[RMDB]
Background
An RNA of 207 nucleotides, treated with DMS and 2A3 and read out base by base. For DMS, 14,605 sequencing reads were counted. The reactions ran in a buffer of 150 mM KOAc, 10 mM MgCl2 and 150 mM bicine (pH 8.5), at 24 C. Reactivities are given for positions 27 through 156. Source: RMDB library OK3TST, as collected in RNAgym.
RNA sequence: GGGAACGACUCGAGUAGAGUCGAAAAUGCGGAUAAGCAGGAUCGCGCCAACGUCGACUAUGUCAUCAUCACAGUCCUCGCUGGAAGAUAGCUCCUCGAAGCUGGUACGGCCUUCCUCUCCGUAGGUAUUCUCUACGUAGUAGUACUCGUACCGUUCGCUACUCUGAUUAUUCGUAAUCAGAGUAGCAAAAGAAACAACAACAACAAC
Reactivity to DMS in 0.01 (KOAc 150mM, MgCl2 10mM, bicine 150mM(pH8.5), 24C), signal-to-noise 4, nucleotides 027 to 156: u010g010c030g030g020a080u000a040a080g040c110a050g010g030a060u000c020g000c050g030c010c010a020a020c020g020u000c010g010a020c020u000a010u010g000u000c090a150u020c110a130u010c050a120c020a030g010u000c040c080u000c090g030c020u020g000g010a090a110g000a080u000a040g000c030u000c020c030u000c030g010a070a060g020c020u000g020g000u000a040c020g000g000c030c020u010u000c050c020u000c010u010c050c020g010u000a020g020g010u000a120u000u000c070u010c000u000a030c020g020u000a110g010u000a080g000u010a090c060u010c030g010u000a070c010c010g010u000u000c060
Reactivity to 2A3 in 0.01 (KOAc 150mM, MgCl2 10mM, bicine 150mM(pH8.5), 24C), signal-to-noise 9, nucleotides 027 to 156: u070g000c020g040g040a060u080a210a050g040c060a020g040g040a050u070c040g000c020g000c060c000a020a020c020g030u020c010g010a010c030u040a070u150g070u100c080a150u070c040a040u110c020a120c010a070g030u030c000c020u030c070g000c010u020g010g000a060a030g020a100u130a040g030c010u010c020c020u030c050g050a070a020g010c080u090g000g010u030a010c010g050g010c010c010u030u050c020c010u010c000u010c030c000g000u010a000g000g020u090a220u300u080c100u010c000u020a000c020g020u020a010g020u030a010g020u010a060c030u010c070g000u010a020c010c000g040u060u050c050